Source: RMDB library OK2TRN, as collected in RNAgym. Chemical mapping of a 177-nucleotide RNA with DMS and 2A3. For DMS the reverse transcriptase was MarathonRT. The reactions ran in a buffer of 150 mM KOAc, 10 mM MgCl2 and 150 mM bicine (pH 8.5), at 24 C.

[RMDB]
RNA sequence: GGGAACGACUCGAGUAGAGUCGAAAAAGGUGGACGCACAGCAUCGGGAAUACACAAUGCCACUGAAUUGUGUACUUCAACAUGGUCACAAUGGCACAUUCUUUAUUUUUUGUAGAGACAGGGUGUCCAGGCGCUGUGAAUUCGUUCACAGCGCCUGAAAAGAAACAACAACAACAAC
Reactivity to DMS in 0.01 (KOAc 150mM, MgCl2 10mM, bicine 150mM(pH8.5), 24C), signal-to-noise 1, nucleotides 027 to 126: a010g000g070u010g000g000a000c130g040c010a070c090a010g010c060a020u000c130g060g000g000a020a040u000a070c080a010c000a030a100u010g060c100c070a080c150u000g010a110a040u000u010g010u010g000u010a020c080u010u030c070a110a160c190a070u000g000g010u000c030a050c080a000a100u000g010g000c020a030c030a070u010u020c000u000u010u000a010u000u020u020u000u000u020g020u000a020g000a030g000a030c300a100g000g000g000u000g000u000c040
Reactivity to 2A3 in 0.01 (KOAc 150mM, MgCl2 10mM, bicine 150mM(pH8.5), 24C), signal-to-noise 1, nucleotides 027 to 126: a000g140g000u020g010g010a030c030g000c040a000c020a050g040c000a030u050c040g030g060g030a040a030u110a060c010a010c000a020a000u060g080c080c040a060c140u120g120a170a010u030u040g020u000g010u070a060c020u040u060c020a140a090c040a160u100g050g010u050c020a020c000a020a070u040g020g000c000a010c030a060u000u100c020u040u070u030a100u070u270u040u090u100u120g010u030a020g030a000g030a000c030a040g130g000g000u010g020u150c030
For 2A3, 857 sequencing reads were counted.